Chemical mapping of a 177-nucleotide RNA with DMS and 2A3. The RNA was probed in 150 mM KOAc, 10 mM MgCl2 and 150 mM bicine (pH 8.5) at 24 C. 2A3 adducts were read by reverse transcription with SuperScript II with manganese. Values cover nucleotides 27 to 126. DMS (dimethyl sulfate) methylates the pairing face of unpaired adenines and cytosines.

[RMDB]
RNA sequence: GGGAACGACUCGAGUAGAGUCGAAAAGCUCAGGCAGCAGCUAUGGCCGAUGUCGUGCAUAUCCCAUCAUAUUAUCUCGGAUUAUAUGAAAGCAUCUUGGGAGUUUGUAUGAUUUUAUCUUACAACCCACCUUAGGAUCAUUCGUGAUCCUAAGGUGAAAAGAAACAACAACAACAAC
Reactivity to DMS in 0.01 (KOAc 150mM, MgCl2 10mM, bicine 150mM(pH8.5), 24C), signal-to-noise 4, nucleotides 027 to 126: g000c010u000c020a100g030g010c020a050g000c050a080g010c030u020a100u020g030g000c000c070g020a070u010g010u010c060g010u010g010c030a070u010a120u020c000c000c000a210u030c030a030u010a030u000u000a020u010c000u040c150g040g000a020u000u000a030u020a050u020g000a040a110a170g020c200a040u030c060u000u000g000g010g000a200g000u020u010u020g000u000a020u000g000a050u000u020u040u040a080u020c020u000u000a040c050a040a070c140c020
Reactivity to 2A3 in 0.01 (KOAc 150mM, MgCl2 10mM, bicine 150mM(pH8.5), 24C), signal-to-noise 9, nucleotides 027 to 126: g010c010u010c060a040g060g000c010a020g000c020a010g000c050u100a140u270g160g000c020c020g030a030u050g010u030c020g000u010g010c020a030u020a090u150c010c010c000a010u020c000a000u010a010u040u080a030u020c140u100c160g170g010a010u010u020a040u020a020u070g050a080a100a040g070c050a100u030c050u100u110g020g030g010a080g090u140u170u050g020u020a020u020g010a030u010u110u060u240a110u050c040u010u030a030c030a030a080c000c010

The 2A3 profile rests on 7,876 reads.